[RMDB]
RNA sequence: GGGAACGACUCGAGUAGAGUCGAAAAGAUAUGGACGAGGUAGGGAGCGAUUGGUCGGAAACGACCACUCGCGAAGAACUACGCUCGUCCUAAGUCAAAUCUGCUCCUGGUUCGCCAGGAGCAGAAACUGUCUAGAACUGUUCGCAGUUCUAGACAGAAAAGAAACAACAACAACAAC
Reactivity to DMS in 0.01 (KOAc 150mM, MgCl2 10mM, bicine 150mM(pH8.5), 24C), signal-to-noise 2, nucleotides 027 to 126: g020a020u000a070u010g020g000a010c000g010a030g000g020u000a000g000g010g000a100g000c010g000a010u000u000g000g010u000c010g030g010a030a030a050c010g010a000c000c000a010c060u000c000g010c000g020a050a120g010a170a300c010u000a010c000g010c000u000c000g000u000c010c010u000a000a060g000u000c030a140a150a210u000c000u000g010c000u000c000c000u000g010g000u000u020c220g010c010c000a040g000g000a000g000c000a000g010a000a040a150
Reactivity to 2A3 in 0.01 (KOAc 150mM, MgCl2 10mM, bicine 150mM(pH8.5), 24C), signal-to-noise 1, nucleotides 027 to 126: g010a000u050a000u130g000g000a010c010g030a000g000g030u000a000g010g080g160a300g030c000g000a020u020u010g000g000u000c000g000g000a040a020a000c010g000a000c000c000a000c030u000c010g000c030g040a070a060g040a010a010c000u000a000c050g200c150u010c010g010u040c000c000u000a000a010g000u000c020a000a020a250u000c000u010g000c000u010c000c010u030g030g040u090u080c300g080c100c000a000g000g000a010g000c000a010g000a000a000a000